[RMDB]
An RNA of 177 nucleotides, treated with DMS and read out base by base. The DMS profile rests on 1,520 reads. DMS adducts were read by reverse transcription with MarathonRT. Conditions: 150 mM KOAc, 10 mM MgCl2 and 150 mM bicine (pH 8.5), 24 C. It was measured as part of the RMDB library OK2TRN. Values cover nucleotides 27 to 126.
RNA sequence: GGGAACGACUCGAGUAGAGUCGAAAACUAGCGGCCAAGAAUCCCCGGCUAGCUGCCACGUCAUCUGAUGUUCUAGCUGGAUUGAAUCAGAAAUGGAAGGAGUUGGAAGUAAAGGCUUCUGCUGAAAAUUUAAUCGGAGUUUCGACUCCGAUUAAAUAAAAGAAACAACAACAACAAC
Reactivity to DMS in 0.01 (KOAc 150mM, MgCl2 10mM, bicine 150mM(pH8.5), 24C), signal-to-noise 2, nucleotides 027 to 126: c050u010a050g040c020g000g010c010c010a130a110g020a130a150u000c040c050c050c140g010g000c010u000a030g010c170u000g000c080c060a050c090g000u010c040a090u020c070u000g010a070u010g010u000u000c040u010a120g020c110u030g010g000a070u010u010g020a060a060u000c050a030g000a030a100a080u010g010g010a070a060g000g020a070g010u000u000g000g020a060a080g000u010a100a140a180g010g010c010u010u010c040u010g020c020u010g000a060a050a090